[RMDB]
RNA sequence: GGGAACGACUCGAGUAGAGUCGAAAAGAAGGAGAUCUCUCGUAAAUAAGACUCAAUUAAAUAUAAAUGCAAACGAUGAAAACUUUGCUGGUGGGGAAGCUAUCGCUGCCUAAUAAGCACUUUAGUUAAACCAUCACUGUGUACUGGCCAAUAAACCGAUAUGAAUGAGGUUCGCCUCAUUCAUAUCAAAAGAAACAACAACAACAAC
Reactivity to 2A3 in 0.01 (KOAc 150mM, MgCl2 10mM, bicine 150mM(pH8.5), 24C), signal-to-noise 2, nucleotides 027 to 156: g060a000a020g000g020a020g010a100u040c030u000c000u030c050g060u100a130a060a140u110a040a050g020a050c010u000c040a000a040u250u180a160a100a030u260a060u050a090a050a040u020g000c010a060a070a040c090g020a020u050g130a020a050a090a110c040u100u200u110g010c020u020g000g000u000g000g010g010g050a000a080g000c000u000a000u000c020g040c210u010g000c010c000u040a050a010u240a150a010g000c000a000c000u010u010u000a010g020u080u050a080a000a010c000c000a000u010c000a020c020u050g000u000g010u040a030c030u020g080g000c000c030a110a050u130a100a070a010c030c080
Conditions: 150 mM KOAc, 10 mM MgCl2 and 150 mM bicine (pH 8.5), 24 C. Chemical mapping of a 207-nucleotide RNA with 2A3. Values are in units of 0.01, from 0 to 300, in steps of 10. The 2A3 profile rests on 1,062 reads. 2A3 adducts were read by reverse transcription with SuperScript II with manganese. The data come from the RNA Mapping Database (RMDB), library ARCHII.